[RMDB]
RNA sequence: GGGAACGACUCGAGUAGAGUCGAAAAAAAAUCUAGUGCAAAUAUUGUCUUAAUUACUUAGGCUAAAGGAAAUAAGUAUUAAAGCGGGACAAGGCAUCGACAUUUGAUACAAAUAUUGAUCAAUGGAACAAGAAACACUACUUCGGUAGUGUUUCAAGUAACUGUAUAAGUUCGCUUAUACAGUUACAAAAGAAACAACAACAACAAC
Reactivity to DMS in 0.01 (KOAc 150mM, MgCl2 10mM, bicine 150mM(pH8.5), 24C), signal-to-noise 1, nucleotides 027 to 156: a100a070a140a100u010c060u010a030g010u010g000c020a110a060a090u040a060u000u000g030u040c040u000u000a070a090u000u000a030c010u010u000a070g000g000c040u000a070a050a090g050g000a040a060a100u000a020a050g000u020a040u000u020a030a080a080g000c110g020g000g030a030c020a040a050g030g000c090a050u000c030g060a080c000a110u000u000u000g020a080u000a070c060a020a060a090u000a050u000u010g000a030u000c060a040a060u000g000g010a070a090c020a090a120g000a010a050a010c000a000c000u000a020c000u000u010c300g040g060u000a000g010u010g000u010u000u000c000a000a210
Reactivity to 2A3 in 0.01 (KOAc 150mM, MgCl2 10mM, bicine 150mM(pH8.5), 24C), signal-to-noise 3, nucleotides 027 to 156: a010a000a000a030u090c080u060a070g010u030g040c050a040a110a160u120a120u160u030g000u000c010u040u150a160a120u080u050a070c010u040u020a030g030g080c060u150a180a030a070g050g000a090a050a050u040a030a040g010u010a010u050u100a150a120a000g090c140g000g000g020a000c000a020a020g010g000c010a020u050c060g020a020c060a060u060u080u140g050a030u110a090c020a020a140a020u180a080u110u150g040a020u030c010a000a040u060g040g000a030a020c030a090a070g000a000a010a010c000a000c010u010a000c000u010u040c050g040g000u000a000g000u000g000u000u000u000c000a000a000
About this RNA
The data come from the RNA Mapping Database (RMDB), library M2RFPK. The record gives the reactivity of an RNA of 207 nucleotides to DMS and 2A3. For 2A3 the reverse transcriptase was SuperScript II with manganese.